[RMDB]
RNA sequence: GGGAACGACUCGAGUAGAGUCGAAAAUCGAGGAGUGGAAGGCGGGUAGGGGGGACCCCAGGGUCAACCUACGGAAAUCCCUGAGUUCCUCGGAUGUCCAGGCCGUCCCCUCUUCUAGAGAAGGGAGCAAUCGAUUGGUUCGCCAAUCGAAAAAGAAACAACAACAACAAC
Reactivity to DMS in 0.01 (KOAc 150mM, MgCl2 10mM, bicine 150mM(pH8.5), 24C), signal-to-noise 9, nucleotides 027 to 129: u030c080g020a000g010g000a070g000u040g020g010a040a040g000g050c060g000g010g010u000a030g010g010g000g000g010g010a020c020c080c030c040a050g030g050g000u030c040a010a140c060c010u000a120c170g020g010a070a110a130u010c040c040c030u010g000a190g000u000u000c020c020u030c190g000g010a070u000g000u020c020c020a080g020g040c070c110g000u020c000c020c020c020u030c010u000u000c000u020a080g000a030g000a020a060g020g020g000a070g070c130a090a070
Reactivity to 2A3 in 0.01 (KOAc 150mM, MgCl2 10mM, bicine 150mM(pH8.5), 24C), signal-to-noise 9, nucleotides 027 to 129: u110c030g000a010g030g000a020g020u090g030g030a040a020g020g010c020g020g030g010u030a040g000g010g010g000g010g010a010c010c010c020c020a060g020g010g010u050c010a080a090c020c020u100a060c130g030g040a040a080a050u090c020c010c000u050g020a050g040u030u010c000c000u010c000g020g030a030u050g040u020c010c010a040g090g020c020c040g030u020c000c020c010c000u000c000u040u010c030u040a040g010a000g010a070a060g030g020g010a030g030c050a040a110
Notes:
Chemical mapping of a 170-nucleotide RNA with DMS and 2A3. For 2A3, 40,937 sequencing reads were counted. The RNA was probed in 150 mM KOAc, 10 mM MgCl2 and 150 mM bicine (pH 8.5) at 24 C.